[RMDB]
RNA sequence: GGGAACGACUCGAGUAGAGUCGAAAAAGUUUCGGUGAGCGUUCGCGGUGCCGAAGCGAAAUUUAAGCGAACUCGCCUGAUACACAUCCUGUCGACGGGAGUUGUAUCCGGUUAAACUCAAAACAUCGACUACGCAUGUAGAAGCCUUAUGUGAAAGCAAUGUAAGCUUGUUCGCAAGCUUACAUUGAAAAGAAACAACAACAACAAC
Reactivity to DMS in 0.01 (KOAc 150mM, MgCl2 10mM, bicine 150mM(pH8.5), 24C), signal-to-noise 1, nucleotides 027 to 156: a130g030u000u000u000c030g050g020u000g030a090g000c020g020u000u000c010g060c000g000g040u000g000c020c000g040a020a020g040c010g000a040a100a100u010u000u010a100a070g040c010g020a030a020c000u000c040g000c010c020u000g020a090u000a040c030a060c060a090u000c020c000u000g010u000c030g000a050c030g040g020g000a060g030u000u010g000u000a040u000c010c080g070g070u010u000a120a050a050c050u000c120a050a060a030a080c010a030u000c020g000a070c020u000a150c080g010c060a090u000g000u000a080g010a080a180g000c060c040u000u000a130u000g010u000g000a070a120a150g000
Reactivity to 2A3 in 0.01 (KOAc 150mM, MgCl2 10mM, bicine 150mM(pH8.5), 24C), signal-to-noise 6, nucleotides 027 to 156: a000g010u010u000u000c010g010g020u020g010a060g010c080g000u020u020c010g000c000g000g010u010g000c000c000g010a000a010g000c010g050a100a010a030u280u270u120a260a030g000c000g000a000a000c000u000c010g000c010c010u010g000a000u000a000c000a000c000a030u000c010c000u010g000u010c010g000a030c060g000g000g000a000g000u010u000g000u010a000u000c000c010g000g000u000u010a040a030a020c130u130c180a010a010a000a000c000a000u000c000g020a000c000u030a030c050g050c020a020u080g040u190a040g060a220a060g060c030c020u100u100a050u050g050u000g030a070a030a010g030